[RMDB]
RNA sequence: GGGAACGACUCGAGUAGAGUCGAAAAACAGUUCAUUUACUGCCUAUAAUUUGAUCAUGCUUCAAGACGUUGUCGAACAAUACCAAGGGACACGUACAACAUCCACAUACGCUAACAAUUUUCUCAACCUCACUGAUAUUAACGGAUACCUACCCUAAUCACCUUCCCAUUUCGAUGGGAAGGUGAUAAAAGAAACAACAACAACAAC
Reactivity to 2A3 in 0.01 (KOAc 150mM, MgCl2 10mM, bicine 150mM(pH8.5), 24C), signal-to-noise 2, nucleotides 027 to 156: a000c120a010g020u080u060c050a080u050u090u140a030c000u020g030c010c000u120a080u120a290a050u150u020u050g080a030u010c030a060u090g000c040u160u090c020a080a060g030a040c030g160u060u090g010u050c050g040a070a010c040a120a100u090a220c100c000a030a070g100g030g000a000c030a000c060g000u040a030c000a090a000c010a030u050c030c000a020c010a080u050a030c090g100c040u050a040a040c040a130a040u020u040u050u090c090u070c040a020a030c030c010u020c010a040c020u020g090a040u070a050u230u050a080a030c080g010g000a030u000a010c000c040u040a010c000c030c000u020a010